Structure probing data (2A3) for a 207-nucleotide construct. For 2A3, 610 sequencing reads were counted. Values are in units of 0.01, from 0 to 300, in steps of 10. Values cover nucleotides 27 to 156. The RNA was probed in 150 mM KOAc, 10 mM MgCl2 and 150 mM bicine (pH 8.5) at 24 C.
RNA sequence: GGGAACGACUCGAGUAGAGUCGAAAAACAUGGACAAAUGGUAGACAAAUUACGUAUCUUUUUGACUAAGUCUCAGUUAUAUACUAAAGAAUUGGACUUUAUCUGGACAUGUCAUAUGAUCACCAACAGCAACUUUGAAGUAACAAAAAGACUAACACCUGCCAACAAGGUUCGCCUUGUUGGCAGGAAAAGAAACAACAACAACAAC
Reactivity to 2A3 in 0.01 (KOAc 150mM, MgCl2 10mM, bicine 150mM(pH8.5), 24C), signal-to-noise 2, nucleotides 027 to 156: a000c070a060u150g000g000a020c070a000a010a160u110g010g040u060a000g010a030c080a040a160a040u180u080a060c050g040u110a110u080c050u110u270u060u010u080g040a010c010u020a050a050g010u000c040u020c100a000g000u040u000a200u030a060u010a150c040u130a170a140a050g090a150a130u060u060g050g000a000c000u000u040u070a070u070c000u010g000g000a000c000a010u060g010u010c000a000u060a020u210g060a120u130c030a030c050c000a030a040c010a020g120c000a030a050c010u070u040u140g010a070a000g040u100a000a010c000a000a030a000a030a000g080a000c100u110a100a000c040a030